Conditions: 150 mM KOAc, 10 mM MgCl2 and 150 mM bicine (pH 8.5), 24 C. This 177-nucleotide RNA was probed chemically with 2A3. For 2A3 the reverse transcriptase was SuperScript II with manganese.
RNA sequence: GGGAACGACUCGAGUAGAGUCGAAAAUUUAACAAACAAUGUAAGUUUAAAAUUGAGGCUAAGGUAACAUGAAAAAGCAGGGAAUCUCAAACUUUAUUCCAUAUAUACACACACACACACACACACACACCCACAGACAAUUCGUUGUCUGUGGGUGAAAAGAAACAACAACAACAAC
Reactivity to 2A3 in 0.01 (KOAc 150mM, MgCl2 10mM, bicine 150mM(pH8.5), 24C), signal-to-noise 1, nucleotides 027 to 126: u000u010u010a000a000c000a000a230a000c030a070a120u160g020u210a050a100g000u090u000u280a070a130a100a100u110u020g030a030g050g010c020u070a000a090g120g030u020a020a010c020a160u010g050a020a000a000a070a000g000c010a050g000g040g020a070a070u010c000u000c100a140a000a020c000u070u060u090a110u040u030c020c010a030u060a000u020a000u060a130c010a000c000a050c030a000c030a000c000a010c000a000c000a000c010a000c000a000c000a000